[RMDB]
An RNA of 207 nucleotides, treated with DMS and 2A3 and read out base by base.
The RNA was probed in 150 mM KOAc, 10 mM MgCl2 and 150 mM bicine (pH 8.5) at 24 C.
Source: RMDB library OK3TST, as collected in RNAgym.
The 2A3 profile rests on 546 reads.
Reactivities are given for positions 27 through 156.

RNA sequence: GGGAACGACUCGAGUAGAGUCGAAAAACCACAGCUGGCUAAUUUUUGUAUUUUUAGUAGAGACUGGGUUUUACCAUAUUGGCCAGACUGGUCUCGAACUCCUGACCUCAGGUGGUCCGCCUGCCUUGGCUUCCCAAAGUGCUGGGAUUAUAGGAGAAAUGGGGUAAUGAUUCGUCAUUACCCCAUUAAAAGAAACAACAACAACAAC
Reactivity to DMS in 0.01 (KOAc 150mM, MgCl2 10mM, bicine 150mM(pH8.5), 24C), signal-to-noise 1, nucleotides 027 to 156: a140c000c000a060c040a090g040c020u000g010g030c010u020a050a050u010u010u010u000u000g000u000a030u000u000u000u000u000a070g020u000a110g000a060g010a080c030u010g010g020g010u000u000u000u000a060c020c000a070u000a110u000u000g030g020c000c010a040g000a080c010u010g020g000u000c020u010c030g010a090a080c030u000c000c010u000g010a070c020c020u000c020a070g020g030u000g020g020u000c050c060g000c030c000u000g000c020c020u000u010g040g030c030u000u000c000c000c020a040a080a120g040u010g020c020u000g010g020g010a050u010u000a080u010a050g010g000a150g020a100
Reactivity to 2A3 in 0.01 (KOAc 150mM, MgCl2 10mM, bicine 150mM(pH8.5), 24C), signal-to-noise 1, nucleotides 027 to 156: a020c030c000a030c030a050g050c010u030g080g000c020u020a040a050u040u110u070u150u180g040u020a130u000u150u090u110u040a030g050u050a040g030a040g020a220c050u070g030g020g020u130u050u070u090a020c010c030a010u050a080u130u130g030g030c000c000a000g060a080c000u060g030g000u010c030u080c070g090a060a050c020u010c010c000u030g020a070c010c060u120c020a020g000g070u010g000g050u040c030c030g060c000c010u060g000c030c000u000u040g030g000c060u000u050c000c020c000a010a060a010g160u110g000c050u040g010g020g000a010u070u100a060u140a070g000g050a040g060a000